[RMDB]
RNA sequence: GGGAACGACUCGAGUAGAGUCGAAAAAAAAAAAGAUAUGGAUCCACGGUAUGGCGAAGAACUUACGUAACAUCAAUCGGAAACGAUUGUGGUAAGGGAGCCAGAAGUGGAUCCUAAGUCAAAAAAAGGAUAAACAAUAGUUCGCUAUUGUUUAUCCAAAAGAAACAACAACAACAAC
Reactivity to DMS in 0.01 (KOAc 150mM, MgCl2 10mM, bicine 150mM(pH8.5), 24C), signal-to-noise 1, nucleotides 027 to 126: a000a000a150a100a140a040a170g010a010u000a300u000g000g000a000u000c000c000a000c000g100g010u010a080u000g020g000c030g030a160a120g010a060a090c000u000u000a000c000g000u010a050a070c150a040u000c000a000a000u000c000g030g000a100a020a100c000g000a030u000u000g000u010g000g010u010a010a000g000g000g000a110g000c000c000a000g000a180a180g010u000g000g010a000u000c000c000u000a000a040g020u020c000a000a020a030a020a030a130a260
Chemical mapping of a 177-nucleotide RNA with DMS. DMS (dimethyl sulfate) methylates the pairing face of unpaired adenines and cytosines. For DMS the reverse transcriptase was MarathonRT. Values cover nucleotides 27 to 126. The reactions ran in a buffer of 150 mM KOAc, 10 mM MgCl2 and 150 mM bicine (pH 8.5), at 24 C.